[RMDB]
RNA sequence: GGGAACGACUCGAGUAGAGUCGAAAAGUGCAUUCAUCAAUGCAGGUUAAGCCAAAGGGAUGUUCCGACCGGAGGCCGACAAUCCAGGGAACCGGAUGUCAUCACGUUGUUGCAGUACCAGAUGGCAAAAAGAUCCGCUCGUUCGCGAGCGGAUCAAGAUAGAUGGAUACUUCGGUAUCCAUCUAUCAAAAGAAACAACAACAACAAC
Reactivity to 2A3 in 0.01 (KOAc 150mM, MgCl2 10mM, bicine 150mM(pH8.5), 24C), signal-to-noise 2, nucleotides 027 to 156: g090u010g000c010a010u010u130c010a050u110c060a150a030u040g020c020a020g080g030u140u120a070a030g000c000c010a010a020a040g060g010g020a060u090g080u060u020c020c020g030a030c010c010g020g010a010g000g020c030c000g000a020c020a120a090u080c060c040a050g000g080g000a100a090c070c040g040g030a050u020g010u010c000a060u030c030a020c110g000u020u020g010u010u030g020c080a060g080u060a060c000c030a040g020a130u100g000g000c000a000a050a010a060a050g010a000u010c000c000g000c000u000c000g040u050u060c220g000c000g110a000g000c000g000g010a000u000c000a000a010
Reactivity to DMS in 0.01 (KOAc 150mM, MgCl2 10mM, bicine 150mM(pH8.5), 24C), signal-to-noise 2, nucleotides 027 to 156: g040u010g000c010a050u000u010c110a180u000c110a050a010u000g020c020a020g060g060u000u000a120a080g030c000c010a020a300a230g000g000g000a070u000g030u010u000c010c010g010a130c000c050g020g030a300g010g010c100c030g000a090c040a060a110u000c010c010a060g010g010g010a120a080c040c040g020g010a090u000g010u000c040a130u030c030a100c190g000u000u000g030u000u000g000c010a050g030u020a070c030c010a140g010a090u000g000g010c020a020a050a080a090a130g000a010u000c000c000g040c000u000c000g060u000u000c270g050c000g040a020g000c020g080g000a000u000c000a010a070